About this RNA
Structure probing data (2A3) for a 207-nucleotide construct.
[RMDB]
RNA sequence: GGGAACGACUCGAGUAGAGUCGAAAACACACACCAGAGAUAUUACCUGACCGACGACACCGACGACAGUCACGAUAUCUUCAAGGACAGGUUCACUGUCGACGACGGUAUCGUCUACGAAACCCUAGAGUGUUUUUUCGUUCUAUGCCUAGAGGGCGUGACAAUAGCGUUUCGACGCUAUUGUCACAAAAGAAACAACAACAACAAC
Reactivity to 2A3 in 0.01 (KOAc 150mM, MgCl2 10mM, bicine 150mM(pH8.5), 24C), signal-to-noise 2, nucleotides 027 to 156: c060a000c020a000c000a010c000c110a080g010a000g010a090u100a090u170u150a140c000c030u160g070a120c020c090g040a020c030g000a020c040a040c020c000g000a050c000g010a010c070a020g020u090c020a020c150g010a000u030a050u160c040u160u080c100a090a040g190g040a050c020a000g020g000u110u140c050a020c010u030g000u000c040g040a060c080g010a000c000g000g010u000a000u000c000g000u010c020u020a000c060g040a050a040a010c010c000c020u070a130g050a030g100u000g130u010u010u010u010u000u010c030g000u060u030c080u140a090u210g030c020c000u080a140g020a120g110g080g010c060

The RNA was probed in 150 mM KOAc, 10 mM MgCl2 and 150 mM bicine (pH 8.5) at 24 C.